Chemical mapping of a 177-nucleotide RNA with DMS and 2A3. Reactivities are given for positions 27 through 126. DMS adducts were read by reverse transcription with MarathonRT. The data come from the RNA Mapping Database (RMDB), library 15KREP.
RNA sequence: GGGAACGACUCGAGUAGAGUCGAAAACUUUGAUGUACCUACAUUCUGCGCAAACCGUUCUGCAAUGUGUAAUUGGUGCUUGAUUAGCCAAGAUUCCAUAACUCACUACCCAGCUCUUAAGAUGGUUGUCUCUCUAUAUCUUCGGAUAUAGAGAGACAAAAGAAACAACAACAACAAC
Reactivity to DMS in 0.01 (KOAc 150mM, MgCl2 10mM, bicine 150mM(pH8.5), 24C), signal-to-noise 1, nucleotides 027 to 126: c070u000u010u020g050a080u010g010u000a090c060c060u010a090c120a110u000u000c060u000g010c070g000c070a040a110a050c060c040g000u000u000c050u010g000c090a030a070u000g000u040g010u030a070a080u010u000g010g000u000g010c050u000u000g000a130u000u010a150g000c070c010a060a050g000a070u000u000c010c000a060u020a070a060c140u000c040a080c080u000a080c040c010c020a090g020c090u000c120u010u000a080a130g000a090u000g010g010u000u000
Reactivity to 2A3 in 0.01 (KOAc 150mM, MgCl2 10mM, bicine 150mM(pH8.5), 24C), signal-to-noise 2, nucleotides 027 to 126: c040u040u050u170g090a050u070g020u080a050c000c000u030a020c000a090u080u010c020u070g010c020g000c040a030a050a100c020c010g030u090u050c020u060g020c000a040a070u060g060u000g050u110a080a070u040u010g050g000u030g000c000u020u030g070a090u100u090a030g030c030c010a020a010g040a100u120u000c010c000a010u040a060a040c020u030c040a020c020u020a040c020c000c020a050g030c030u030c030u110u040a060a030g030a100u100g060g030u050u030